[RMDB]
RNA sequence: GGGAACGACUCGAGUAGAGUCGAAAAGUAAUAGAUACGUGGAUGACGAGAAAGGGUGCGCUGAUAUCCACGACGAAUGCUAGCAGUAAAAAGAAUAGCGCUCCUUAUACAACUAGCAACAAAAGGAUAAGGUAUCGUGAUGUCAAUCACAUUGCGAGGAUAAUGAUCAGUUCGCUGAUCAUUAUCCAAAAGAAACAACAACAACAAC
Reactivity to DMS in 0.01 (KOAc 150mM, MgCl2 10mM, bicine 150mM(pH8.5), 24C), signal-to-noise 2, nucleotides 027 to 156: g030u000a040a120u010a120g000a190u010a050c010g010u000g000g020a060u000g020a300c120g010a220g020a090a080a090g010g020g020u000g010c020g050c050u010g020a080u000a100u000c010c020a070c040g010a090c100g020a070a130u010g000c010u000a000g020c020a130g030u000a080a080a070a080a110g010a090a120u000a090g020c050g010c010u000c000c020u010u010a090u010a100c050a070a040c020u000a040g000c010a060a180c090a030a030a050a080g020g010a120u010a060a160g000g020u000a070u000c020g010u010g010a030u000g020u000c010a120a170u000c110a110c040a030u000u010g060c000g020a130
Reactivity to 2A3 in 0.01 (KOAc 150mM, MgCl2 10mM, bicine 150mM(pH8.5), 24C), signal-to-noise 7, nucleotides 027 to 156: g030u030a020a120u050a140g080a060u100a080c000g000u010g000g010a020u050g070a040c100g030a040g100a200a080a040g060g000g020u080g000c020g010c020u040g060a040u030a010u090c010c010a000c010g030a020c060g070a070a040u080g010c030u050a020g000c070a030g050u170a020a090a060a030a040g050a080a080u040a040g010c010g000c000u030c000c000u010u070a120u010a010c010a040a050c020u020a000g030c020a010a070c020a060a100a030a020g070g010a060u100a080a050g050g010u110a050u110c010g000u010g000a010u010g040u120c090a110a100u080c020a090c010a020u010u020g000c020g010a050